[RMDB]
RNA sequence: GGGAACGACUCGAGUAGAGUCGAAAAGCACCUGCGCACCUCACACCGUGACGAGCCGUCCACCCUCCUCGCCACGCCCGUAAUCAACGCCGCGAUCCAAGCAUUCCUGCAAGCAUGGGACGGUCUAGCCGCAACGACAAUUCGUUGUCGUUGCGGCAAAAGAAACAACAACAACAAC
Reactivity to 2A3 in 0.01 (KOAc 150mM, MgCl2 10mM, bicine 150mM(pH8.5), 24C), signal-to-noise 1, nucleotides 027 to 126: g000c000a050c000c000u030g020c010g070c000a020c000c000u030c000a040c010a000c000c000g040u090g020a020c030g010a010g000c030c020g000u110c060c000a090c000c000c000u000c030c010u000c040g090c000c000a020c000g010c000c000c010g060u070a020a150u090c050a010a100c150g000c000c000g000c050g070a030u040c000c000a040a000g020c000a020u000u050c000c000u020g040c060a220a080g000c050a090u270g010g000g070a020c000g030g040u000c000u020a010